Chemical mapping of a 177-nucleotide RNA with 2A3 and DMS.
[RMDB]
RNA sequence: GGGAACGACUCGAGUAGAGUCGAAAAGUCCAGCGCAAGUUCGACGACUAUUUGAACCAACAGAUCACCUUGUGUCGUGAUCUUGGCGCCCAGGAGCUGAAGAUUGCCCGCGAUCAGUGGGAGAGCACACUGGGUGCGUGUUCGCACGCACCCAGUGAAAAGAAACAACAACAACAAC
Reactivity to 2A3 in 0.01 (KOAc 150mM, MgCl2 10mM, bicine 150mM(pH8.5), 24C), signal-to-noise 1, nucleotides 027 to 126: g020u010c000c000a000g000c030g020c050a000a070g000u010u020c000g190a020c020g000a040c070u060a100u160u070u100g030a030a060c050c000a020a150c070a100g030a050u030c020a000c050c070u150u210g050u060g020u240c000g040u000g000a000u050c000u000u020g080g040c020g000c000c020c050a060g030g060a050g030c000u070g080a060a000g070a080u000u150g070c020c010c010g000c030g050a270u220c050a020g080u020g020g040g010a010g010a000g050c010a000
Reactivity to DMS in 0.01 (KOAc 150mM, MgCl2 10mM, bicine 150mM(pH8.5), 24C), signal-to-noise 2, nucleotides 027 to 126: g020u000c050c030a120g030c040g010c030a100a060g000u000u000c030g020a050c110g020a110c060u000a070u000u000u000g010a110a130c030c050a070a130c180a040g000a030u000c010a010c070c030u010u010g030u000g000u000c110g020u000g000a010u010c000u000u000g020g000c000g000c010c060c050a140g000g010a110g030c030u010g010a110a100g010a140u000u000g010c010c020c030g020c060g020a070u000c150a060g020u000g000g020g000a100g050a070g000c100a240
Source information: For DMS the reverse transcriptase was MarathonRT. For DMS, 1,124 sequencing reads were counted.